An RNA of 207 nucleotides, treated with 2A3 and read out base by base. Values cover nucleotides 27 to 156. The reactions ran in a buffer of 150 mM KOAc, 10 mM MgCl2 and 150 mM bicine (pH 8.5), at 24 C.
RNA sequence: GGGAACGACUCGAGUAGAGUCGAAAAGCAGGUGCUGGAGGUCCUGGAGUCCGGGCGGCAUCCGGCGAUGGCCGAGGGUGCUUCGCGUUGAUCGACGAACUGGUCAGGUACCUCUCCAGUCCGUCCAACCGGGAGGUGCUGCUGGAACAGCUCGGCCGCCUUGGAUAUGUUUCGACAUAUCCAAGGCAAAAGAAACAACAACAACAAC
Reactivity to 2A3 in 0.01 (KOAc 150mM, MgCl2 10mM, bicine 150mM(pH8.5), 24C), signal-to-noise 1, nucleotides 027 to 156: g000c060a020g020g070u020g020c010u020g010g040a060g020g010u100c000c030u000g020g080a120g080u030c060c000g000g020g000c040g000g030c030a060u060c030c000g050g000c030g120a170u130g030g000c000c010g020a020g010g080g000u070g040c030u040u050c090g050c000g040u010u070g060a160u190c070g010a020c010g000a020a030c010u020g000g070u110c050a030g040g050u070a100c030c030u040c000u000c010c000a020g000u050c020c030g020u000c010c010a010a020c030c000g020g030g020a010g000g000u010g020c000u010g060c020u030g030g060a080a020c020a020g030c000u000c000g010g000c030c040